Record summary
An RNA of 177 nucleotides, treated with 2A3 and read out base by base. The RNA was probed in 150 mM KOAc, 10 mM MgCl2 and 150 mM bicine (pH 8.5) at 24 C.
RNA sequence: GGGAACGACUCGAGUAGAGUCGAAAAACAUCGCAGCGGUGUGAGAUUAUCAUUAUUGUUAUUGUCGCUCGUCAUGUCAACUCGUCAUCAACAUGCCGCUUCUCCGACUGAAAAGCAGACGAGGAUGGGCCUAUCCUAUGUUCGCAUAGGAUAGGCCAAAAGAAACAACAACAACAAC
Reactivity to 2A3 in 0.01 (KOAc 150mM, MgCl2 10mM, bicine 150mM(pH8.5), 24C), signal-to-noise 2, nucleotides 027 to 126: a010c010a030u090c050g050c080a000g000c000g020g000u010g060u050g110a130g010a210u080u290a050u110c230a100u040u270a110u180u000g040u020u050a050u000u300g000u000c080g000c000u000c000g020u100c070a040u110g090u090c000a000a060c020u000c020g110u030c050a180u000c050a050a100c040a000u070g070c000c060g000c000u140u000c050u120c020c050g050a100c060u080g060a010a000a140a140g080c040a060g000a000c000g000a000g110g020a180u110g090